Structure probing data (DMS and 2A3) for a 177-nucleotide construct. High 2A3 reactivity points to a flexible backbone, as in loops and unpaired stretches.
RNA sequence: GGGAACGACUCGAGUAGAGUCGAAAACGUCUCGUAGAUUGUGAUGAACAAGAUGGUGAAGCAAAUCUUGCUUUGAUUGAAUGGCUAGAGAAGAUCGAUGAUGUUGAUGAAGUAUACCAUAACAUGGGUUCGCAAACUAAUUCGUUAGUUUGCGAACAAAAGAAACAACAACAACAAC
Reactivity to DMS in 0.01 (KOAc 150mM, MgCl2 10mM, bicine 150mM(pH8.5), 24C), signal-to-noise 3, nucleotides 027 to 126: c170g010u000c030u010c030g020u000a060g010a110u000u000g020u010g010a070u020g000a050a050c010a020a050g010a060u010g010g020u000g010a100a060g000c060a030a090a060u000c070u010u010g000c030u000u010u000g020a130u010u000g000a100a050u000g000g000c030u000a090g010a080g010a070a090g000a060u000c050g010a070u000g010a040u030g020u000u000g020a070u010g010a030a110g020u010a050u010a160c040c010a050u010a070a060c120a300u010g000g010
Reactivity to 2A3 in 0.01 (KOAc 150mM, MgCl2 10mM, bicine 150mM(pH8.5), 24C), signal-to-noise 2, nucleotides 027 to 126: c010g020u010c000u000c060g050u000a020g050a140u010u270g010u080g040a090u100g030a070a050c040a100a000g010a050u080g130g030u140g110a010a010g010c030a050a080a140u070c040u060u080g030c000u020u010u050g090a130u040u140g050a120a030u070g000g060c020u030a000g020a000g060a210a030g040a030u020c010g050a050u040g010a060u090g110u070u090g050a100u090g040a050a010g060u040a090u060a100c050c000a000u090a120a100c060a080u110g100g000
Annotation:
DMS adducts were read by reverse transcription with MarathonRT. The RNA was probed in 150 mM KOAc, 10 mM MgCl2 and 150 mM bicine (pH 8.5) at 24 C.